[RMDB]
Conditions: 150 mM KOAc, 10 mM MgCl2 and 150 mM bicine (pH 8.5), 24 C.
An RNA of 207 nucleotides, treated with 2A3 and read out base by base.
For 2A3 the reverse transcriptase was SuperScript II with manganese.
The 2A3 profile rests on 684 reads.
RNA sequence: GGGAACGACUCGAGUAGAGUCGAAAAUGUGACGUUCGCGUCACAAAAAAAGAUAUGGAAGCUAAGACAGAUUUGGGAGAGUUCGCUUCGGAAACGAAGCGACUCUUUGAUCAAAUUCGAGCUUCCUAAGUCAAAAAACUUGGUUUCGACCAAGUAAUAGGUUGACUAGAUUCGUCUAGUCAACCUAAAAAGAAACAACAACAACAAC
Reactivity to 2A3 in 0.01 (KOAc 150mM, MgCl2 10mM, bicine 150mM(pH8.5), 24C), signal-to-noise 1, nucleotides 027 to 156: u150g000u010g000a010c020g010u010u090c300g030c060g120u040c000a010c020a020a040a000a000a000a000a020g040a040u090a040u120g010g000a000a000g050c010u040a140a060g060a080c150a060g060a100u000u060u030g060g040g000a000g020a000g020u210u160c010g000c000u000u010c040g000g020a100a110a000c020g010a000a000g000c000g000a000c000u020c020u030u000u030g000a000u000c000a040a040a040u100u080c060g030a020g010c000u000u010c000c010u000a020a000g030u020c020a010a000a000a300a000a000c030u040u020g100g010u150u160u210c240g100a020c020c000a000a000g010u030a030a060